Source: RMDB library OK1LIB, as collected in RNAgym. Structure probing data (2A3 and DMS) for a 177-nucleotide construct. The RNA was probed in 150 mM KOAc, 10 mM MgCl2 and 150 mM bicine (pH 8.5) at 24 C.

[RMDB]
RNA sequence: GGGAACGACUCGAGUAGAGUCGAAAAAAGCCUUUUGCCUUCGCGGGCAACGACAUUGAACGACGACGAAAUCGCGUCGCUGCGCCGCAUCAUCGGCGGGUCGGGCACCAGUGCCGCCGCUCGGCUGCAGCCCAAAACGGUUCGCCGUUUUGGGCUGAAAAGAAACAACAACAACAAC
Reactivity to 2A3 in 0.01 (KOAc 150mM, MgCl2 10mM, bicine 150mM(pH8.5), 24C), signal-to-noise 3, nucleotides 027 to 126: a010a000g100c040c000u160u110u030u100g070c030c000u120u210c080g000c050g000g000g000c010a010a000c060g060a010c010a070u110u150g120a250a110c000g080a010c030g020a020c070g090a050a100a080u090c030g000c010g040u000c020g000c010u030g010c060g120c000c000g050c020a080u160c040a010u130c070g000g020c030g010g000g100u210c090g050g000g020c000a020c010c010a060g060u010g090c010c000g000c000c000g030c040u070c050g050g000c020u030g000
Reactivity to DMS in 0.01 (KOAc 150mM, MgCl2 10mM, bicine 150mM(pH8.5), 24C), signal-to-noise 3, nucleotides 027 to 126: a130a050g000c000c010u020u030u020u020g000c020c000u000u040c260g030c230g040g000g000c030a030a020c150g000a070c100a170u000u010g010a160a180c060g000a060c040g010a050c010g000a160a150a130u000c060g000c090g010u000c050g020c010u020g000c000g000c030c020g010c180a170u070c140a100u010c110g000g000c030g010g000g020u030c010g000g020g010c030a080c080c040a110g000u010g030c000c010g000c020c040g030c010u040c140g020g010c070u000g030